[RMDB]
RNA sequence: GGGAACGACUCGAGUAGAGUCGAAAAGACAAAUGCAGCAUAUUAGGCUAAGCAGGAAAGGGACGGUAGCUCCUGGUGUCAGUUCAUACGGUGUGUUGCAUCUGCGUCGUGCACACAUGCACCCAAAUCCUGGUCAAAAUUUCGAUUUUGACCAGGAAAAAGAAACAACAACAACAAC
Reactivity to DMS in 0.01 (KOAc 150mM, MgCl2 10mM, bicine 150mM(pH8.5), 24C), signal-to-noise 2, nucleotides 027 to 126: g020a050c090a030a120a080u000g010c040a020g020c020a040u000a080u000u000a090g010g000c040u000a030a140g000c030a040g010g000a060a080a100g010g000g000a050c070g000g010u010a050g000c080u000c020c010u000g010g010u000g020u000c030a100g000u010u000c070a060u010a080c150g000g000u000g010u010g000u000u010g000c020a000u000c080u010g010c110g020u000c080g020u000g000c010a070c150a030c100a060u000g000c050a070c000c020c040a100a090a160
Reactivity to 2A3 in 0.01 (KOAc 150mM, MgCl2 10mM, bicine 150mM(pH8.5), 24C), signal-to-noise 1, nucleotides 027 to 126: g040a000c010a000a150a010u080g000c020a010g040c000a020u020a120u090u120a100g060g000c030u050a100a000g050c010a010g020g190a050a050a060g040g040g010a010c020g000g060u080a010g000c090u030c080c000u130g020g040u060g060u100c030a090g060u120u190c060a050u100a270c040g030g000u060g010u060g000u040u030g020c030a020u020c020u060g090c020g040u140c030g000u070g000c000a000c060a030c000a000u060g050c000a060c000c010c020a010a020a020